[RMDB]
RNA sequence: GGGAACGACUCGAGUAGAGUCGAAAAAGCAGUUAUAUCGAAAAACGAUAUAACUGCAAAUAGGAUGGGGUGUGAUAGGUGGCACGGAGAAUUUUGGAUUCUCAGGGAUGGGUUCGAUUCUCAUAGUCCUAAAAGCAGUGUGUCACAACGCACUGCAGAGUACUAGUGAUUUCGAUCACUAGUACUCAAAAGAAACAACAACAACAAC
Reactivity to DMS in 0.01 (KOAc 150mM, MgCl2 10mM, bicine 150mM(pH8.5), 24C), signal-to-noise 2, nucleotides 027 to 156: a190g000c000a030g000u000u000a010u000a000u020c020g010a110a150a100a260a300c030g020a010u000a000u000a000a010c000u000g000c000a000a000a060u000a080g000g010a090u000g020g000g000g020u000g020u000g010a190u000a190g030g000u000g000g000c050a060c070g010g000a040g010a020a030u000u000u000u000g000g020a100u000u000c020u000c030a140g000g010g000a080u010g000g020g000u000u010c040g000a210u000u000c010u000c010a110u010a130g000u000c010c000u000a030a040a070a120g030c010a040g040u000g040u000g000u000c190a070c230a050a110c020g030c000a010c040u010g020c000a080
Reactivity to 2A3 in 0.01 (KOAc 150mM, MgCl2 10mM, bicine 150mM(pH8.5), 24C), signal-to-noise 4, nucleotides 027 to 156: a000g010c010a010g000u010u000a000u000a000u000c020g090a220a050a090a050a060c020g000a000u000a000u000a000a000c000u000g000c000a000a000a000u080a010g020g010a050u050g010g000g020g030u050g010u030g040a070u080a100g040g010u060g040g000c040a020c050g040g010a010g030a030a020u120u100u100u220g140g080a040u050u000c020u010c040a020g030g010g010a050u100g010g010g010u030u060c020g020a070u080u000c020u000c020a020u050a040g070u040c020c040u120a100a120a060a000g010c000a000g000u000g000u000g030u040c020a030c030a210a010c050g000c000a010c000u000g000c010a010